[RMDB]
This 177-nucleotide RNA was probed chemically with DMS and 2A3. The data come from the RNA Mapping Database (RMDB), library OK2TRN.

RNA sequence: GGGAACGACUCGAGUAGAGUCGAAAAGAACCCGCAGGCGGGAACGCUUCUGGUGGCGGGAUCCGUCGGGCCUUACGGCGCGUAUCUGGCGGAUGGCUCUGAAUACCGUGGCGAUUAUCAUUGUAGCCCAGGGAAUAGAGUUCGCUCUAUUCCCUGGAAAAGAAACAACAACAACAAC
Reactivity to DMS in 0.01 (KOAc 150mM, MgCl2 10mM, bicine 150mM(pH8.5), 24C), signal-to-noise 2, nucleotides 027 to 126: g000a130a220c020c000c040g050c110a100g070g030c010g020g000g020a110a150c050g000c060u000u000c050u020g000g020u000g010g020c150g030g030g030a060u000c040c000g030u010c030g020g010g010c040c010u030u000a100c210g020g000c000g010c160g030u000a060u020c020u020g020g000c000g000g020a030u000g030g010c020u010c020u000g000a180a130u000a030c030c020g000u000g010g010c020g000a140u000u000a080u010c090a110u000u000g020u000a110g010c080
Reactivity to 2A3 in 0.01 (KOAc 150mM, MgCl2 10mM, bicine 150mM(pH8.5), 24C), signal-to-noise 1, nucleotides 027 to 126: g020a000a030c000c000c000g010c100a150g130g030c060g020g010g000a020a040c000g030c000u070u040c050u250g120g010u060g070g000c000g000g000g030a000u020c010c000g000u000c020g000g040g000c000c010u150u220a070c060g040g020c020g020c010g080u050a080u230c060u050g010g020c030g050g000a050u040g030g000c000u000c040u100g110a100a050u060a080c010c020g030u030g010g000c010g020a040u040u100a090u150c120a060u080u170g110u120a030g030c010